This 177-nucleotide RNA was probed chemically with 2A3.
RNA sequence: GGGAACGACUCGAGUAGAGUCGAAAAUGAGCAAAUAAAUAUUUCCGAAUCCAAUACUGAAUUUGGAAAUGAAAUAUUGAGAAAUACAUUAUUUAUACAACUUAUGAUAUUCUUAAACAGAAUUUUCAUGGAUACGCAUGUUCGCAUGCGUAUCCAUAAAAGAAACAACAACAACAAC
Reactivity to 2A3 in 0.01 (KOAc 150mM, MgCl2 10mM, bicine 150mM(pH8.5), 24C), signal-to-noise 2, nucleotides 027 to 126: u150g000a090g030c100a070a000a100u130a000a030a000u110a070u000u040u010c020c020g030a040a020u060c000c000a030a040u040a300c070u250g050a070a100u020u000u000g010g000a000a050a000u020g070a050a040a000u040a000u000u070g000a020g080a050a080a050u120a020c020a010u070u190a110u130u300u000a230u130a140c030a130a000c060u280u200a000u090g000a000u020a050u090u070c090u140u270a100a160a130c030a000g020a270a230u080u010u030u080c040
The reactions ran in a buffer of 150 mM KOAc, 10 mM MgCl2 and 150 mM bicine (pH 8.5), at 24 C.